RNA sequence: GGGAACGACUCGAGUAGAGUCGAAAAGGAGGAUGUUACGGACAAAUUCCGUAACCGUGUAGGCCAGCAUCAAAGAUGCGUACCAAGCUGCGUUUCAACCUGCGUGGGUUGAGGCGGCUUAGCGGAUUAAGGCGUUCUGCCCUAGUGGUCCAUUACCGUUAUCACGUCAGUUCGCUGACGUGAUAACAAAAGAAACAACAACAACAAC
Reactivity to 2A3 in 0.01 (KOAc 150mM, MgCl2 10mM, bicine 150mM(pH8.5), 24C), signal-to-noise 3, nucleotides 027 to 156: g070g020a030g020g010a060u100g020u010u000a010c010g010g000a020c160a140a220a140u180u040c000c010g000u010a020a010c020c000g010u030g070u080a070g050g000c000c000a000g000c030a030u060c080a100a210a030g040a010u060g020c000g000u010a090c000c030a020a010g010c010u060g000c000g100u040u030u040c020a020a010c000c000u110g180c180g260u300g070g000g000u000u000g000a020g020g000c000g000g000c000u000u010a030g020c030g000g040a010u020u180a100a070g040g010c020g060u080u040c050u070g080c020c000c000u060a050g060u040g090g020u000c040c010a050u130u120a110c060c070
Reactivity to DMS in 0.01 (KOAc 150mM, MgCl2 10mM, bicine 150mM(pH8.5), 24C), signal-to-noise 1, nucleotides 027 to 156: g010g030a160g030g040a160u000g000u020u010a000c010g000g000a020c090a110a120a130u010u000c010c000g010u000a000a020c000c120g040u010g000u000a130g020g000c000c040a090g000c000a060u000c090a140a090a180g000a090u000g030c040g060u000a010c000c010a030a070g020c000u000g010c020g050u000u000u000c030a040a000c050c020u020g010c300g010u020g050g010g010u000u010g000a070g040g030c030g040g000c000u000u000a070g010c040g000g060a050u000u000a050a010g000g000c000g030u020u010c070u010g010c000c040c030u010a060g050u000g030g020u030c030c070a120u000u000a090c000c020

Chemical mapping of a 207-nucleotide RNA with 2A3 and DMS. It was measured as part of the RMDB library VIROID. For 2A3, 2,367 sequencing reads were counted.